An RNA of 177 nucleotides, treated with 2A3 and DMS and read out base by base. Source: RMDB libraries RFM100 and RFMREP, as collected in RNAgym.
[RMDB]
RNA sequence: GGGAACGACUCGAGUAGAGUCGAAAAACGUAGGCUACGGCCUACGAUUUACUCGUCGAUCCAAGUAAAUCUCGUGCGGCUUUUGCAUUCAAAGCCGUUCGAGAUUUACUUAAAUCGAUGGUAAAAAAAAAGCAGAUGAAUUCGUUCAUCUGCUUUUAAAAGAAACAACAACAACAAC
Reactivity to 2A3 in 0.01 (KOAc 150mM, MgCl2 10mM, bicine 150mM(pH8.5), 24C), signal-to-noise 2, nucleotides 027 to 126: a020c000g010u000a000g000g000c010u020a010c270g070g000c000c000u000a000c000g000a000u000u010u000a060c060u070c050g010u000c010g010a000u020c010c030a000a010g000u000a000a000a000u000c010u010c020g000u010g010c030g010g030c040u010u060u040u140g090c080a120u190u250c060a040a000a010g000c010c000g000u000u000c000g000a000g000a000u000u000u000a000c000u000u000a010a000a000u020c000g000a010u010g000g000u040a030a040a000a000a020
Reactivity to DMS in 0.01 (KOAc 150mM, MgCl2 10mM, bicine 150mM(pH8.5), 24C), signal-to-noise 4, nucleotides 027 to 126: a110c010g000u000a000g010g020c000u000a100c210g020g010c000c000u010a000c000g010a060u010u000u000a010c000u040c010g020u000c000g000a000u010c100c160a080a040g000u000a000a000a010u000c000u000c000g020u000g000c000g010g000c000u000u010u000u020g020c230a180u030u040c120a030a010a000g000c000c000g010u000u000c000g010a010g010a000u000u000u000a000c000u000u010a020a120a010u000c010g000a000u000g000g000u000a000a000a000a010a050

For 2A3 the reverse transcriptase was SuperScript II with manganese.